Source: RMDB library OK1LIB, as collected in RNAgym. An RNA of 177 nucleotides, treated with DMS and 2A3 and read out base by base. The RNA was probed in 150 mM KOAc, 10 mM MgCl2 and 150 mM bicine (pH 8.5) at 24 C. The 2A3 profile rests on 1,437 reads.

RNA sequence: GGGAACGACUCGAGUAGAGUCGAAAAGGGAGAUCCGAGCAGAGGCAUAGCGAACUGCGCACGGCGAAGCCUUGAGGGAAGGCCGUAGGACCCGGGUUCGAUUCCCGGCUGCUCCACCGAAGGGCCAGCAGGCCCUACGGUUCGCCGUAGGGCCUGCAAAAGAAACAACAACAACAAC
Reactivity to DMS in 0.01 (KOAc 150mM, MgCl2 10mM, bicine 150mM(pH8.5), 24C), signal-to-noise 2, nucleotides 027 to 126: g000g010g000a120g000a130u020c130c060g000a170g020c040a060g000a120g000g080c140a080u030a150g000c020g000a100a150c060u000g000c100g030c040a090c000g000g000c020g010a160a300g050c010c000u000u030g000a100g000g020g010a150a080g000g000c050c040g000u000a120g020g000a000c190c000c080g000g090g000u000u010c110g000a300u010u010c000c000c000g000g000c180u040g010c010u040c040c020a140c050c030g020a100a040g000g010g050c030c070a060
Reactivity to 2A3 in 0.01 (KOAc 150mM, MgCl2 10mM, bicine 150mM(pH8.5), 24C), signal-to-noise 2, nucleotides 027 to 126: g000g030g010a050g000a050u010c010c030g020a020g010c050a010g020a050g060g000c060a060u140a060g040c020g050a060a030c030u070g000c010g040c050a050c040g040g000c010g060a020a010g030c000c050u070u110g050a040g010g010g020a030a100g000g000c000c010g010u050a050g040g050a070c010c000c000g000g010g000u040u050c020g010a030u120u040c000c000c000g030g010c020u030g000c020u020c010c020a040c000c010g020a040a040g020g000g000c010c000a010